[RMDB]
RNA sequence: GGGAACGACUCGAGUAGAGUCGAAAAAGUGUAGUAUCUAGGACGGGGCACGUGCGUGGAAGUUUAUGGCGUACGUGCCAGGGGUGCAGAGGUUUUCCUGUCCGCGAUGCAGGGUCGACUCUGUGAGGCGGCGGGCGUCGUUCGCGAUGUUUGCCGCAAAAGAAACAACAACAACAAC
Reactivity to 2A3 in 0.01 (KOAc 150mM, MgCl2 10mM, bicine 150mM(pH8.5), 24C), signal-to-noise 9, nucleotides 027 to 126: a000g100u090g010u050a060g020u020a080u100c080u050a050g040g060a040c060g070g010g040g000c000a000c000g000u000g000c010g010u060g080g200a160a140g040u120u180u140a220u240g090g000c000g000u010a000c000g000u000g000c000c000a000g000g000g000g010u070g000c010a010g010a060g060g020u050u020u060u080c010c000u020g020u050c040c020g050c050g050a060u130g000c010a010g020g010g010u060c040g030a050c000u000c000u000g030u020g030a040g100
Reactivity to DMS in 0.01 (KOAc 150mM, MgCl2 10mM, bicine 150mM(pH8.5), 24C), signal-to-noise 9, nucleotides 027 to 126: a070g010u020g010u010a040g020u010a030u010c040u010a150g010g010a070c060g010g000g000g020c000a010c010g020u000g000c010g020u010g000g000a090a150g010u030u030u040a080u060g020g000c000g010u000a010c010g020u000g000c010c010a010g000g000g000g020u010g000c030a040g000a060g000g010u020u010u020u010c010c000u000g010u010c040c040g010c120g000a060u010g010c020a080g000g000g010u020c070g010a080c010u000c000u000g000u010g000a100g010